[RMDB]
RNA sequence: GGGAACGACUCGAGUAGAGUCGAAAACUACAUCACCUGAUCACUGAUGGCUCAACGGUAUCCGGCGGUACAACUGAAUACUUGUAGCUGCCUUUUGAGCGGGUUGGCUGCAAUCCGAAACGGAGAGAAAACCUAAUUACGUUCGCGUAAUUAGGAACAAUUUAGACUGGUUCGCCAGUCUAAAUUGAAAAGAAACAACAACAACAAC
Reactivity to 2A3 in 0.01 (KOAc 150mM, MgCl2 10mM, bicine 150mM(pH8.5), 24C), signal-to-noise 9, nucleotides 027 to 156: c040u070a010c000a040u040c020a020c020c010u050g040a060u060c040a030c060u040g020a040u060g090g000c020u040c070a070a070c060g060g010u080a070u040c020c020g020g010c030g020g060u100a070c050a100a040c110u140g070a120a070u090a150c050u020u040g010u010a000g010c000u010g010c010c000u040u070u070u100g080a060g020c060g000g010g000u180u250g050g000c010u010g000c000a010a030u030c020c000g060a100a120a100c080g050g000a020g000a010g020a040a100a030a030c000c000u000a000a000u000u000a000c010g010u020u050c200g000c000g110u000a000a000u000u000a000g000g000a000a000
Reactivity to DMS in 0.01 (KOAc 150mM, MgCl2 10mM, bicine 150mM(pH8.5), 24C), signal-to-noise 4, nucleotides 027 to 156: c020u000a040c020a080u000c010a050c000c010u000g000a060u000c040a110c120u010g010a040u000g010g020c020u000c020a090a060c040g000g010u000a030u000c010c020g030g020c040g030g020u000a110c120a080a090c010u000g000a050a050u000a020c060u010u000g020u010a070g000c010u000g010c010c010u000u000u000u000g010a070g000c050g020g000g010u000u010g040g000c060u000g000c020a060a110u000c030c020g000a090a110a120c050g010g010a080g010a300g010a080a040a080a140c010c000u000a020a000u000u000a000c000g020u000u010c300g030c030g040u000a010a010u010u000a000g010g000a040a050
Source information
This 207-nucleotide RNA was probed chemically with 2A3 and DMS. For DMS the reverse transcriptase was MarathonRT. The reactions ran in a buffer of 150 mM KOAc, 10 mM MgCl2 and 150 mM bicine (pH 8.5), at 24 C. 2A3 adducts were read by reverse transcription with SuperScript II with manganese. The 2A3 profile rests on 16,870 reads. Reactivities are given for positions 27 through 156.